[RMDB]
RNA sequence: GGGAACGACUCGAGUAGAGUCGAAAAAUGCAUGUCGAGAGUAUAUGUCCUCUCGUUAAUCCAACAUAUAUUGUUAUAGUCGCAAACGACGAAAAUUACGCUCUAGCAGCUUAAACCCUGUUUACUUGGUUGCUGAUCACCUACAGUUGGUCAACUACGUAGUAUGCUGGUUCGCCAGCAUACUACGAAAAGAAACAACAACAACAAC
Reactivity to 2A3 in 0.01 (KOAc 150mM, MgCl2 10mM, bicine 150mM(pH8.5), 24C), signal-to-noise 3, nucleotides 027 to 156: a000u250g010c080a070u090g020u070c000g000a000g000a000g020u020a010u010a010u070g030u060c000c070u000c000u010c000g010u020u030a020a010u000c010c000a020a000c010a000u050a010u030a040u060u210g070u140u140a190u080a170g020u040c010g000c100a100a160a060c050g020a000c000g020a030a010a010a010u210u140a040c030g020c020u000c030u070a080g020c070a000g010c000u060u110a050a070a060c020c020c030u000g010u040u090u060a140c090u060u080g110g010u030u020g000c040u010g020a040u060c040a050c020c040u140a080c030a120g000u040u020g010g050u030c010a040a010c030u040a020
Reactivity to DMS in 0.01 (KOAc 150mM, MgCl2 10mM, bicine 150mM(pH8.5), 24C), signal-to-noise 1, nucleotides 027 to 156: a040u010g020c110a030u010g030u010c040g010a020g020a050g000u000a040u000a060u010g010u030c090c040u000c010u000c000g050u030u000a000a080u020c060c020a060a020c010a060u010a060u000a090u000u020g000u000u000a130u000a090g000u000c030g000c010a080a050a110c020g000a050c010g010a080a080a020a120u000u000a080c010g040c010u000c020u010a060g010c040a050g020c020u010u000a050a100a070c070c020c040u000g010u000u000u010a070c080u000u010g010g010u000u000g030c000u000g000a050u000c050a070c040c030u010a100c050a100g030u000u000g020g000u000c000a060a050c020u010a220
Structure probing data (2A3 and DMS) for a 207-nucleotide construct. The DMS profile rests on 2,179 reads. Conditions: 150 mM KOAc, 10 mM MgCl2 and 150 mM bicine (pH 8.5), 24 C.